[RMDB]
RNA sequence: GGGAACGACUCGAGUAGAGUCGAAAACGCCUGAGACCCCUCCUCCUUGGCCGGGAGGCCCUUUGCUGUGUCCCUGCCAAGAGGACCUACUGCAGUCCUUCCCGAAGGACCUCAGUGUCCUGGGACCGAACCUAGGAGUAUUCGUACUCCUAGGUUCAAAAGAAACAACAACAACAAC
Reactivity to 2A3 in 0.01 (KOAc 150mM, MgCl2 10mM, bicine 150mM(pH8.5), 24C), signal-to-noise 2, nucleotides 027 to 126: c010g050c050c140u090g080a120g120a160c020c020c000c000u000c000c000u000c000c030u010u000g000g000c010c020g020g000g000a020g010g020c010c000c050u180u090u170g040c100u040g020u030g120u060c000c000c010u010g000c000c000a010a010g010a010g010g000a000c000c010u030a020c020u050g100c010a000g010u020c000c000u010u010c000c010c040g040a030a010g010g010a010c010c040u200c090a150g010u110g000u220c000c020u000g000g050g010a010c030c060
Reactivity to DMS in 0.01 (KOAc 150mM, MgCl2 10mM, bicine 150mM(pH8.5), 24C), signal-to-noise 5, nucleotides 027 to 126: c130g030c210c080u020g000a170g010a150c020c020c010c030u010c010c010u000c110c020u000u000g000g010c010c130g000g000g010a040g000g000c020c150c130u000u000u000g020c130u000g010u010g000u000c000c010c000u000g010c010c010a030a040g010a080g000g000a040c060c020u010a020c020u000g010c100a050g010u000c010c060u000u000c010c010c050g010a170a040g000g000a020c000c020u010c140a120g020u010g010u000c000c000u000g000g010g000a120c190c190